[RMDB]
RNA sequence: GGGAACGACUCGAGUAGAGUCGAAAAGAUAUGGAGGGAUACAUACCACAACAGCUCGGAAACGAGACAUGUGGUGUAUUCCCUCCUAAGUCAAAGUCUACUUGUUACUUCGGUAACAAGUAGACAACAGAGUUACACGGUUCGCCGUGUAACUCUGAAAAGAAACAACAACAACAAC
Reactivity to DMS in 0.01 (KOAc 150mM, MgCl2 10mM, bicine 150mM(pH8.5), 24C), signal-to-noise 2, nucleotides 027 to 126: g010a040u000a300u000g000g010a010g000g000g000a030u000a020c040a080u000a100c010c010a010c010a020a130c270a170g010c000u000c020g010g000a050a090a180c000g000a000g000a040c070a080u000g030u010g010g000u000g010u000a010u030u000c000c000c000u000c000c000u000a000a050g000u010c060a100a050a080g000u000c000u000a000c000u000u010g000u000u000a030c000u010u010c200g020g020u000a000a000c000a000a010g000u000a000g010a000c000a080a090
Reactivity to 2A3 in 0.01 (KOAc 150mM, MgCl2 10mM, bicine 150mM(pH8.5), 24C), signal-to-noise 2, nucleotides 027 to 126: g030a050u060a020u180g000g000a000g010g000g010a000u010a000c030a040u220a060c010c010a010c010a080a070c090a090g030c020u000c000g020g050a050a090a060c000g010a020g070a020c020a060u100g000u000g000g000u020g010u020a010u020u110c030c010c020u010c000c000u000a020a000g010u020c040a080a040a000g010u020c000u000a000c000u000u010g000u010u000a010c020u020u080c300g160g000u000a000a000c010a000a000g000u010a000g000a000c000a000a000